An RNA of 177 nucleotides, treated with 2A3 and DMS and read out base by base. The DMS profile rests on 44,011 reads. The data come from the RNA Mapping Database (RMDB), library M2PK50.
RNA sequence: GGGAACGACUCGAGUAGAGUCGAAAAAGCUCCUGUUUCGACAGGAGCUGUGUGGCUGCCCUUUUGUGCUCGAUGUAGAGUGCUUUCCUGGCGGAAAGGGCUUGAGAGCUUGAUUCGUCAAGCUCAAAGAUAAAAGUAGUUUCGACUACUUUUAUCUAAAAGAAACAACAACAACAAC
Reactivity to 2A3 in 0.01 (KOAc 150mM, MgCl2 10mM, bicine 150mM(pH8.5), 24C), signal-to-noise 5, nucleotides 027 to 126: a000g000c000u000c000c010u020g010u010u080u060c160g090a010c000a010g000g000a000g000c000u000g010u020g010u040g100g040c080u060g000c020c000c000u010u030u020u060g040u030g000c000u000c010g110a140u290g090u270a080g010a000g020u030g000c000u030u040u030c010c020u030g060g070c050g020g040a030a020a000g000g010g010c000u060u110g150a120g000a000g010c000u000u000g020a020u040u070c180g030u000c120a000a000g000c000u000c010a040a060
Reactivity to DMS in 0.01 (KOAc 150mM, MgCl2 10mM, bicine 150mM(pH8.5), 24C), signal-to-noise 9, nucleotides 027 to 126: a010g010c000u000c000c000u000g010u000u000u010c160g010a030c000a010g010g010a010g020c000u000g000u000g020u000g010g010c060u000g010c010c000c010u000u000u000u010g020u000g010c010u000c010g010a210u010g020u010a130g000a020g020u000g000c020u000u000u000c010c010u000g010g020c090g040g020a010a020a020g000g000g010c010u010u000g010a190g010a020g010c000u000u000g000a040u000u010c190g010u000c000a010a000g000c000u000c000a020a060